[RMDB]
Chemical mapping of a 177-nucleotide RNA with 2A3 and DMS. It was measured as part of the RMDB libraries RFM100 and RFMREP. Values cover nucleotides 27 to 126. 2A3 adducts were read by reverse transcription with SuperScript II with manganese.

RNA sequence: GGGAACGACUCGAGUAGAGUCGAAAACUGCAAAGUUUAAUCGAAAAAUUUGCCAGUGAUAUGAUGGCCUUGUCACAGAGAUCACAAGGGACACGGAGUUGACUUUUGCUCAAGGUGGAACGACAGAUCAGUAGGAGGUAUUCGUACCUCCUACUGAAAAAGAAACAACAACAACAAC
Reactivity to 2A3 in 0.01 (KOAc 150mM, MgCl2 10mM, bicine 150mM(pH8.5), 24C), signal-to-noise 5, nucleotides 027 to 126: c020u030g000c010a020a010a020g020u040u060u100a140a070u150c080g110a080a040a040a070a100u050u050u010g050c080c020a030g030u040g040a050u030a040u190g140a060u040g050g010c000c020u100u100g000u020c020a030c020a080g110a030g020a140u060c000a020c030a100a060g040g030g030a030c020a000c070g030g000a080g020u020u050g060a080c020u090u070u050u120g010c020u010c060a060a030g090g020u040g020g080a090a010c020g060a020c020a030g060a060
Reactivity to DMS in 0.01 (KOAc 150mM, MgCl2 10mM, bicine 150mM(pH8.5), 24C), signal-to-noise 6, nucleotides 027 to 126: c030u000g010c080a040a060a040g010u000u010u000a090a100u030c180g000a030a060a040a070a100u010u010u000g000c070c070a080g010u020g010a110u000a050u010g020a120u010g000g010c000c050u000u020g020u000c060a080c090a090g000a100g010a100u010c070a070c050a080a070g000g010g000a110c080a050c060g000g010a090g000u010u010g000a050c060u000u000u000u000g010c060u010c050a040a080g000g010u010g000g010a040a050c040g010a080c240a060g010a120